The record gives the reactivity of an RNA of 207 nucleotides to 2A3 and DMS. Conditions: 150 mM KOAc, 10 mM MgCl2 and 150 mM bicine (pH 8.5), 24 C. For DMS, 2,482 sequencing reads were counted.
[RMDB]
RNA sequence: GGGAACGACUCGAGUAGAGUCGAAAAUGGACUUUUUACAGUUCCUACUUAUCCGGUAUUAACGCUGUUUUAUUGGCGCAAAGGUUUACGGAUAAACAACUAAUAAUUAAACCUUUUGUGUGCGAAAAUUGGACGUUUAGGUUCGCCUAAACGUCAAGUAAUCUGAGAGUUUCGACUCUCAGAUUACAAAAGAAACAACAACAACAAC
Reactivity to 2A3 in 0.01 (KOAc 150mM, MgCl2 10mM, bicine 150mM(pH8.5), 24C), signal-to-noise 4, nucleotides 027 to 156: u070g020g000a040c040u120u120u050u140u300a120c180a050g010u100u150c000c010u020a080c030u050u040a020u020c010c000g000g040u080a170u180u130a120a040c070g010c040u040g140u130u150u040u060a160u190u170g040g000c020g020c000a010a010a010g000g000u000u000u010a000c000g010g010a030u040a050a140a020c020a030a030c040u180a070a090u130a230a020u130u030a010a010a000c000c000u030u050u140u060g060u010g010u070g050c080g050a070a070a070a090u180u130g070g010a010c010g000u000u010u000a000g010g010u030u020c170g060c040c000u000a000a000a000c000g000u000c000a000a000
Reactivity to DMS in 0.01 (KOAc 150mM, MgCl2 10mM, bicine 150mM(pH8.5), 24C), signal-to-noise 2, nucleotides 027 to 156: u000g030g000a080c080u000u010u000u020u000a100c120a150g070u000u000c020c070u010a100c100u010u020a030u010c010c000g030g000u000a060u000u000a160a070c000g010c000u000g030u010u050u000u000a140u030u000g000g010c040g020c000a040a020a050g080g030u000u000u000a040c000g020g000a070u000a000a040a150c100a060a140c120u000a060a110u010a090a130u020u000a040a030a070c010c000u000u000u000u000g030u000g010u000g030c020g010a150a020a080a190u010u010g020g000a020c000g010u000u000u000a020g010g040u000u000c300g090c000c010u000a010a010a000c000g000u010c000a000a100